[RMDB]
RNA sequence: GGGAACGACUCGAGUAGAGUCGAAAAGAUAUGGACAGAAGCUCGAUAAGCUCAGUUUCGGAAACGAAACGAGCUUUUGACGAGCCACGUCCUAAGUCAAAUCGAGGGCUGUUCGCAGCCCUCGAAAGGCUUAAUAGUACUUCGGUACUAUUAAGCCAAAAGAAACAACAACAACAAC
Reactivity to 2A3 in 0.01 (KOAc 150mM, MgCl2 10mM, bicine 150mM(pH8.5), 24C), signal-to-noise 2, nucleotides 027 to 126: g020a010u040a010u070g010g000a000c010a000g080a130a020g030c000u020c020g060a150u060a300a000g000c010u010c090a100g030u010u010u010c000g010g000a050a040a020c010g020a000a010a010c000g020a000g010c040u000u040u040u060g070a020c000g000a000g000c000c000a010c020g010u000c000c010u000a060a010g020u020c030a030a030a140u040c020g000a000g000g040g000c000u020g050u100u140c260g020c100a000g020c020c000c000u000c000g000a010a000a000
Reactivity to DMS in 0.01 (KOAc 150mM, MgCl2 10mM, bicine 150mM(pH8.5), 24C), signal-to-noise 3, nucleotides 027 to 126: g010a020u000a170u010g030g010a010c000a050g010a220a300g000c000u000c000g000a180u000a010a010g010c000u000c000a130g010u000u000u000c000g000g000a040a040a050c000g010a010a000a000c000g000a000g020c000u000u000u000u000g000a130c110g010a020g010c000c020a190c260g000u000c000c000u000a030a080g010u000c010a060a090a120u000c000g000a010g020g020g010c000u000g000u000u010c200g010c000a010g010c010c000c010u010c000g000a000a020a060

The record gives the reactivity of an RNA of 177 nucleotides to 2A3 and DMS. The RNA was probed in 150 mM KOAc, 10 mM MgCl2 and 150 mM bicine (pH 8.5) at 24 C.